Structure probing data (2A3 and DMS) for a 207-nucleotide construct. Reactivities are rounded to 0.1 and cut off at 0 and 3. As a SHAPE reagent, 2A3 marks flexible, mostly unpaired nucleotides at the ribose 2'-OH. The DMS profile rests on 1,797 reads. 2A3 adducts were read by reverse transcription with SuperScript II with manganese.

[RMDB]
RNA sequence: GGGAACGACUCGAGUAGAGUCGAAAAGAAAUUCAUGAACUCCGUCAGGUCCGGAAGGAAGCAGCGGUAAGUGAAAUCUUCCGUGUGCCGUGGAUAAAUCUGAUUUGAGUUGACCAGGUGAGUAACACUCAUAGAUUAUUGUCGAUUCAAGGUGCACCCAAAGGAUGAAGUUCGCUUCAUCCUUUGGAAAAGAAACAACAACAACAAC
Reactivity to 2A3 in 0.01 (KOAc 150mM, MgCl2 10mM, bicine 150mM(pH8.5), 24C), signal-to-noise 3, nucleotides 027 to 156: g030a010a060a010u050u040c010a010u050g020a040a030c060u010c040c000g100u080c020a030g030g010u010c010c000g080g120a100a120g050g010a040a030g000c020a010g010c020g050g000u100a080a010g010u000g040a050a050a070u020c010u090u020c040c030g040u010g020u020g010c010c010g040u070g020g020a040u070a070a110a010u030c050u040g110a140u070u070u080g020a010g010u010u060g050a070c020c060a070g010g200u090g060a090g000u080a120a010c040a040c080u000c000a010u040a030g060a040u040u120a080u200u280g060u070c060g040a030u050u000c010a000a010g010g000u010g020c010a000c000
Reactivity to DMS in 0.01 (KOAc 150mM, MgCl2 10mM, bicine 150mM(pH8.5), 24C), signal-to-noise 1, nucleotides 027 to 156: g020a080a040a120u000u000c050a050u000g030a040a170c070u000c010c060g010u030c010a180g000g010u000c010c020g000g020a180a140g040g000a120a050g000c020a160g010c070g030g030u010a050a210g000u000g010a060a100a150u000c000u000u010c010c030g010u000g040u000g030c000c040g040u020g020g000a080u000a050a120a060u010c030u010g020a050u010u000u000g010a080g000u000u000g000a080c030c070a090g010g020u000g000a070g050u010a140a180c030a300c010u000c010a090u000a130g000a230u000u000a050u000u010g000u000c010g010a110u000u000c030a030a050g000g010u000g020c000a040c040